[RMDB]
RNA sequence: GGGAACGACUCGAGUAGAGUCGAAAACACUAGAACCAGCGGCGGUGGAUCAGAUAUCACCUAUACAGGAUUUCGUCGUAUUGCUUUAGGUGAACAGUUUUAUAAUCAAGUAACAGUUACACCAGAACUACUAUCCGAGAUUCGUCUCGGAUAGUAGAAAAGAAACAACAACAACAAC
Reactivity to 2A3 in 0.01 (KOAc 150mM, MgCl2 10mM, bicine 150mM(pH8.5), 24C), signal-to-noise 4, nucleotides 027 to 126: c020a000c030u080a060g030a130a060c010c010a020g010c010g050g000c020g010g040u060g020g050a040u060c030a040g040a090u100a020u120c050a060c040c000u040a050u030a110c080a040g160g000a090u100u050u150c040g030u020c010g000u120a110u050u180g070c030u060u070u170a060g000g010u000g020a010a020c010a020g000u000u000u070u060a220u070a080a160u140c090a100a050g050u030a090a010c020a030g020u030u060a060c010a020c020c010a010g060a100a010
Reactivity to DMS in 0.01 (KOAc 150mM, MgCl2 10mM, bicine 150mM(pH8.5), 24C), signal-to-noise 4, nucleotides 027 to 126: c060a100c120u000a050g010a060a140c110c020a080g000c040g000g000c050g020g010u000g010g000a080u000c070a120g000a080u000a090u020c090a030c080c080u000a080u010a080c170a080g000g010a110u010u010u010c080g000u010c070g030u010a080u000u000g000c050u000u000u010a080g020g020u000g000a060a070c020a040g000u000u000u000u000a070u000a050a110u040c170a040a090g020u020a030a040c060a060g010u000u010a080c070a050c030c020a200g000a100a170